This 177-nucleotide RNA was probed chemically with DMS and 2A3.

RNA sequence: GGGAACGACUCGAGUAGAGUCGAAAAGCGACUACCUUCGGGUAGUCGCAAAUAAAUUCAGCGGUAAUUCGAGGCGAAAUAUUACCGCUGAUCGCCUCGAUAAAAGCCUAGACUUCGGUCUAGGCAACCUGUUAACUUGGUUCGCCAAGUUAACAGGAAAAGAAACAACAACAACAAC
Reactivity to DMS in 0.01 (KOAc 150mM, MgCl2 10mM, bicine 150mM(pH8.5), 24C), signal-to-noise 1, nucleotides 027 to 126: g010c000g010a010c000u000a000c000c020u000u000c190g030g030g010u000a000g000u000c000g020c030a000a040a050u000a040a060a150u010u000c000a030g010c000g030g000u000a000a010u010u010c140g020a150g000g010c090g010a030a040a110u010a080u000u000a000c000c000g000c020u000g000a010u000c140g000c040c000u010c180g020a130u010a050a050a090a110g010c000c000u000a000g030a040c010u000u020c140g050g000u000c000u020a000g000g000c000a000a000
Reactivity to 2A3 in 0.01 (KOAc 150mM, MgCl2 10mM, bicine 150mM(pH8.5), 24C), signal-to-noise 2, nucleotides 027 to 126: g010c000g020a000c000u010a020c000c000u040u050c170g060g000g000u010a000g010u000c000g000c000a000a000a000u010a000a000a000u100u010c000a000g000c010g000g040u020a010a060u050u110c080g040a050g160g090c080g040a080a070a050u210a030u030u040a020c010c000g000c000u000g000a000u000c000g000c010c010u010c030g010a040u140a200a100a030a050g000c000c000u000a000g000a000c000u020u090c300g070g000u010c000u000a000g000g020c000a000a000
For 2A3 the reverse transcriptase was SuperScript II with manganese. The DMS profile rests on 1,254 reads. For 2A3, 2,945 sequencing reads were counted.